[RMDB]
Annotation: Chemical mapping of a 207-nucleotide RNA with 2A3. It was measured as part of the RMDB library M2RFOK.
RNA sequence: GGGAACGACUCGAGUAGAGUCGAAAAACUGCUAUACGUGGCAGAAACACGCCUUACCAGGACUAAACAGCGUGUCUAAAAAACAGUCCUUCAUACCUGAUCUGGAGGGUAGAUCAGGAAUACUAAAAAAAUCGGGUGAAGUUCGCUUCACCCGAAACAUUCUACGCUGGUUCGCCAGCGUAGAAUGAAAAGAAACAACAACAACAAC
Reactivity to 2A3 in 0.01 (KOAc 150mM, MgCl2 10mM, bicine 150mM(pH8.5), 24C), signal-to-noise 3, nucleotides 027 to 156: a000c010u010g010c010u010a010u060a180c100g080u110g020g030c000a000g020a020a040a010c000a010c000g000c010c010u020u040a030c020c080a010g000g010a020c000u040a110a050a010c000a010g010c010g000u010g020u040c110u030a010a000a010a010a010a000c030a010g000u000c020c000u020u050c060a110u070a120c000c010u000g000a000u000c000u010g050g050a090g060g080g020u070a020g000a000u030c020a000g030g000a000a010u090a040c060u170a060a020a070a060a030a050a130u010c000g000g030g000u000g000a000a000g020u070u130c170g030c120u000u000c000a000c020c000c000g000a000a000a000
The 2A3 profile rests on 2,268 reads.